RNA sequence: GGGAACGACUCGAGUAGAGUCGAAAACGGUAUUCGUACCGCUAAUGUCCUAAGUCAGGAGGGUCGAGAGACGAUGAAAUGGAGGCUCUCGGAAACGAGAGCCGAUGAAAUGGAGUCUCUUCCCUCCUGAUAUGGAAAAUGUACUCUUCGGAGUAAAACCUAUUAAUCUUUUCGAAGAUUAAUAGGUAAAAGAAACAACAACAACAAC
Reactivity to DMS in 0.01 (KOAc 150mM, MgCl2 10mM, bicine 150mM(pH8.5), 24C), signal-to-noise 2, nucleotides 027 to 156: c010g020g030u000a050u010u010c220g010u000a010c000c000g000c010u000a090a090u000g010u000c010c010u010a060a300g020u000c030a050g010g000a030g010g010g000u010c220g040a050g000a030g040a060c020g010a170u020g010a080a110a040u000g010g010a190g030g010c000u000c010u000c000g030g020a060a120a230c020g000a030g010a030g050c010c000g020a000u010g000a110a050a060u000g010g000a200g010u000c000u000c000u010u000c020c010c000u000c010c000u000g000a000u000a030u010g030g000a040a050a110a180u010g010u000a040c020u000c010u000u000c300g040g010a030g000u000a040a040a170
Reactivity to 2A3 in 0.01 (KOAc 150mM, MgCl2 10mM, bicine 150mM(pH8.5), 24C), signal-to-noise 3, nucleotides 027 to 156: c000g000g010u030a040u070u190c250g030u050a020c010c010g000c070u090a170a010u220g060u060c010c000u000a110a060g030u000c010a000g020g000a000g010g020g020u230c160g030a000g000a000g000a040c030g120a280u040g010a000a030a000u020g000g030a000g000g020c000u000c000u010c000g000g010a080a050a010c010g000a000g000a000g030c020c010g010a060u010g000a000a010a030u020g000g000a010g000u000c000u000c000u000u040c000c000c000u010c000c000u000g000a000u000a000u000g020g000a020a010a020a040u150g020u030a010c020u050c000u090u180c230g130g020a020g010u100a040a120a020